An RNA of 177 nucleotides, treated with DMS and 2A3 and read out base by base. It was measured as part of the RMDB library OK1LIB. Conditions: 150 mM KOAc, 10 mM MgCl2 and 150 mM bicine (pH 8.5), 24 C. DMS adducts were read by reverse transcription with MarathonRT.
RNA sequence: GGGAACGACUCGAGUAGAGUCGAAAAUACGCACACAAAUUGAUUUAGCUAAAGAAGUCUUUUGUAUACCAGUAGAUAUUGCCUCACAACCUUUAGCCACUACUCUCAUAUGAGAACUUGCAAGCUACCUCAUACCCUAUUUCGAUAGGGUAUGAGGAAAAGAAACAACAACAACAAC
Reactivity to DMS in 0.01 (KOAc 150mM, MgCl2 10mM, bicine 150mM(pH8.5), 24C), signal-to-noise 3, nucleotides 027 to 126: u010a050c130g000c110a060c080a090c100a030a030a120u010u020g000a050u000u010u020a060g000c120u050a050a070a050g010a030a080g020u000c000u000u010u010u010g010u010a110u030a050c120c120a070g010u010a100g000a080u010a020u050u020g010c050c000u000c060a070c130a090a060c090c060u010u000u000a020g020c030c110a050c030u000a030c090u010c000u000c060a070u030a050u000g010a070g000a070a090c100u000u000g010c130a000a120g000c070u030a120
Reactivity to 2A3 in 0.01 (KOAc 150mM, MgCl2 10mM, bicine 150mM(pH8.5), 24C), signal-to-noise 6, nucleotides 027 to 126: u100a020c030g030c030a010c000a010c010a100a070a050u110u080g040a030u040u070u100a060g030c030u110a020a020a130g090a060a010g040u000c000u030u020u020u030g030u020a070u030a090c030c040a020g040u050a010g100a070u100a050u050u150g050c030c000u070c010a070c000a050a080c010c010u030u090u050a000g010c000c000a020c010u080a070c010u010c010u000c040a110u080a120u300g060a040g010a080a040c010u020u020g030c030a040a020g010c020u030a050